[RMDB]
RNA sequence: GGGAACGACUCGAGUAGAGUCGAAAAAAUGGCACUGCAGAGCUGAUGGGCCAUGUACCUAUCCAGAAUGAGAUCCCAUCUUGCACACUGUGCUAAUUUGAGAUUCUCAUGCCUCCUACUUGGAGAGACCGCAUGCCCAGCUUCGGCUGGGCAUGAAUGGAAUAUCCCAAUUCGUUGGGAUAUUCCAAAAAGAAACAACAACAACAAC
Reactivity to DMS in 0.01 (KOAc 150mM, MgCl2 10mM, bicine 150mM(pH8.5), 24C), signal-to-noise 2, nucleotides 027 to 156: a050a050u000g000g020c020a170c010u000g020c050a160g010a150g000c050u010g000a030u000g010g010g060c010c040a070u000g030u000a080c030c000u010a020u010c030c110a180g020a140a060u000g000a030g010a090u000c000c010c010a030u000c070u000u000g020c020a080c050a230c140u020g000u000g010c010u000a030a050u000u000u000g010a100g000a080u000u000c020u000c020a060u000g010c040c040u000c040c010u010a070c130u010u000g010g000a110g000a120g030a190c040c060g000c010a030u000g000c000c000c000a030g000c010u000u000c160g050g010c000u020g010g000g000c010a000u000g000a030a110
Reactivity to 2A3 in 0.01 (KOAc 150mM, MgCl2 10mM, bicine 150mM(pH8.5), 24C), signal-to-noise 2, nucleotides 027 to 156: a000a000u060g020g020c020a010c020u070g020c110a040g010a040g130c040u050g010a030u040g000g000g030c020c040a000u020g060u100a100c020c020u030a080u130c090c050a050g030a180a040u040g020a050g000a160u060c000c010c000a000u010c030u040u090g000c020a010c010a050c090u130g000u010g000c010u050a020a110u010u010u000g020a030g010a030u090u000c000u010c040a030u120g050c000c000u000c010c010u110a240c110u080u110g020g000a010g000a000g040a070c020c140g000c030a010u000g000c000c000c000a000g010c000u020u020c120g120g020c040u020g000g010g000c000a000u000g000a000a000
The data come from the RNA Mapping Database (RMDB), library M2RFPK. Structure probing data (DMS and 2A3) for a 207-nucleotide construct. Reactivities are given for positions 27 through 156. For DMS the reverse transcriptase was MarathonRT. The 2A3 profile rests on 1,156 reads. For 2A3 the reverse transcriptase was SuperScript II with manganese. The reactions ran in a buffer of 150 mM KOAc, 10 mM MgCl2 and 150 mM bicine (pH 8.5), at 24 C.